RNA sequence: GGGAACGACUCGAGUAGAGUCGAAAAACUGUUCGUGCGGCAGGCGCUGCCGAUGCUGCGCGAACUGCUCGGCUCGCUGGUGCAGGGGACCGACUAUGGCAUCGGCAUGGACCCCGCCGACGCGCUGUAAUUACUGGACCUUCGGGUCCAGUAAUUAAAAAGAAACAACAACAACAAC
Reactivity to DMS in 0.01 (KOAc 150mM, MgCl2 10mM, bicine 150mM(pH8.5), 24C), signal-to-noise 2, nucleotides 027 to 126: a300c060u010g010u000u000c000g020u000g000c000g020g040c000a060g000g000c060g040c270u040g010c020c000g000a170u020g010c010u000g030c000g020c010g000a010a020c000u010g000c070u000c000g010g010c020u010c060g040c040u000g010g020u020g000c040a080g000g010g000g000a140c040c020g000a080c110u030a080u040g000g010c060a090u010c010g030g010c070a040u010g010g010a190c000c010c010c040g000c030c010g000a070c070g000c070g000c070u010g000
Reactivity to 2A3 in 0.01 (KOAc 150mM, MgCl2 10mM, bicine 150mM(pH8.5), 24C), signal-to-noise 4, nucleotides 027 to 126: a000c030u040g000u020u020c000g000u020g040c000g000g000c010a020g020g000c130g100c300u300g000c000c020g090a220u080g000c000u010g000c010g000c010g000a000a000c000u000g000c010u020c020g020g010c000u030c060g040c020u060g030g030u160g030c060a080g010g030g000g050a050c030c010g010a040c060u190a120u270g080g000c040a050u060c070g030g000c020a050u150g090g000a090c000c020c000c000g000c010c010g020a050c020g010c010g000c000u010g040
Source: RMDB library OK1LIB, as collected in RNAgym. An RNA of 177 nucleotides, treated with DMS and 2A3 and read out base by base. Conditions: 150 mM KOAc, 10 mM MgCl2 and 150 mM bicine (pH 8.5), 24 C. Values cover nucleotides 27 to 126.